[RMDB]
RNA sequence: GGGAACGACUCGAGUAGAGUCGAAAAGAGGUAACCUUCGUACUGAACACUUUUGUUACAGGAAAGGAGAAAGUCAGUCCGGGUAGAACUUCAGACCCUAAUCCUGCAGCCCCCGACAGCGAGUCAGGAAAUUAUAGACCUUCGGGUCUAUAAUUUCAAAAGAAACAACAACAACAAC
Reactivity to DMS in 0.01 (KOAc 150mM, MgCl2 10mM, bicine 150mM(pH8.5), 24C), signal-to-noise 2, nucleotides 027 to 126: g020a060g000g020u010a090a090c040c010u000u010c070g020u000a060c010u000g020a050a070c050a150c090u000u000u020u010g000u000u000a180c210a130g000g020a010a080a070g010g010a140g000a140a060a120g000u000c040a020g000u000c040c070g000g000g020u000a040g000a140a030c020u000u000c020a060g000a090c040c010c000u000a080a080u010c040c000u010g000c030a110g000c010c010c020c040c030g010a050c080a070g040c060g010a070g010u000c070a060g010
Conditions: 150 mM KOAc, 10 mM MgCl2 and 150 mM bicine (pH 8.5), 24 C. Chemical mapping of a 177-nucleotide RNA with DMS. For DMS, 1,142 sequencing reads were counted. Reactivities are given for positions 27 through 126.